Chemical mapping of a 207-nucleotide RNA with 2A3 and DMS.
RNA sequence: GGGAACGACUCGAGUAGAGUCGAAAAGAACACUCAGUGAACGCUGUAGGCUGUUCUGUCUUGGCCAGUCAAGGCAGAAAUGUGAUCAGAUGCACAUUUAACAGCCUAGACACCAGCGUUCAGUGUUCAUCUGAUAACACUGCACUGAGACUGGCCACGUUUGUAGCUAGUUCGCUAGCUACAAACGAAAAGAAACAACAACAACAAC
Reactivity to 2A3 in 0.01 (KOAc 150mM, MgCl2 10mM, bicine 150mM(pH8.5), 24C), signal-to-noise 3, nucleotides 027 to 156: g040a040a030c070a010c060u040c020a050g030u000g080a050a010c040g000c010u010g020u080a010g060g000c010u010g030u040u070c040u020g070u030c040u040u030g010g020c010c000a010g010u050c010a010a020g010g000c000a000g010a030a130a050u130g020u060g040a040u060c090a070g020a090u160g060c000a000c000a000u060u030u110a060a010c000a010g000c000c010u010a020g040a010c090a030c030c000a010g010c000g000u000u010c000a000g000u010g000u020u000c020a020u010c020u050g010a040u050a130a000c010a020c020u030g010c050a150c200u020g010a050g010a240c010u000g000g000c000c010a010
Reactivity to DMS in 0.01 (KOAc 150mM, MgCl2 10mM, bicine 150mM(pH8.5), 24C), signal-to-noise 2, nucleotides 027 to 156: g030a100a130c040a120c110u000c040a090g000u000g030a050a110c000g010c000u000g050u020a060g000g020c000u000g000u000u010c060u000g010u000c070u010u000g020g020c000c150a140g020u000c030a050a140g000g000c000a090g010a020a040a010u010g020u000g000a050u010c000a090g040a130u000g000c010a030c010a060u000u000u010a050a050c000a060g030c020c000u000a130g070a250c050a210c300c000a050g000c010g000u010u000c000a030g050u010g020u010u000c040a050u010c020u030g000a140u000a030a100c010a070c010u000g010c020a140c030u020g010a270g000a080c020u000g010g010c010c040a120
For 2A3, 2,632 sequencing reads were counted. The reactions ran in a buffer of 150 mM KOAc, 10 mM MgCl2 and 150 mM bicine (pH 8.5), at 24 C.